The data come from the RNA Mapping Database (RMDB), library 15KLIB. An RNA of 170 nucleotides, treated with DMS and 2A3 and read out base by base. Values are in units of 0.01, from 0 to 300, in steps of 10. For 2A3 the reverse transcriptase was SuperScript II with manganese. The 2A3 profile rests on 93,253 reads. For DMS the reverse transcriptase was MarathonRT. The RNA was probed in 150 mM KOAc, 10 mM MgCl2 and 150 mM bicine (pH 8.5) at 24 C.

RNA sequence: GGGAACGACUCGAGUAGAGUCGAAAACUGUCGGUGAAUCCUCCCCUGAGAGGCCUCUUCCUAGGCCCGGAGUCUAUCUCCAUCUGGUCCGUCCGGGCCCUCUUCGCCGGGGGAGCCCCCUCUCCAUAAGCCUCUAACUUCGGUUAGAGGAAAAGAAACAACAACAACAAC
Reactivity to DMS in 0.01 (KOAc 150mM, MgCl2 10mM, bicine 150mM(pH8.5), 24C), signal-to-noise 9, nucleotides 027 to 129: c050u040g050u060c040g000g050u000g040a100a070u020c030c020u020c000c000c000c000u000g030a060g010a070g000g040c100c030u000c070u020u020c030c050u000a110g010g020c030c000c040g020g010a030g010u020c080u000a060u040c000u010c000c050a090u000c120u050g030g020u050c050c060g060u030c030c040g020g000g030c000c020c030u000c050u060u050c090g040c100c030g000g000g000g000g000a060g000c020c010c040c010c000u000c020u030c000c050a100u070a120a130g030
Reactivity to 2A3 in 0.01 (KOAc 150mM, MgCl2 10mM, bicine 150mM(pH8.5), 24C), signal-to-noise 9, nucleotides 027 to 129: c040u060g110u140c060g080g040u110g090a080a080u070c010c000u020c000c010c000c010u040g040a040g010a020g060g000c010c010u060c030u100u060c010c030u040a050g010g010c000c010c010g000g000a000g020u010c040u090a120u060c050u020c050c030a110u050c080u120g020g010u030c040c050g090u010c020c020g030g000g000c010c000c000u050c030u120u120c050g060c060c020g010g000g000g010g000a000g000c000c000c000c000c000u010c000u000c020c020a110u090a120a040g040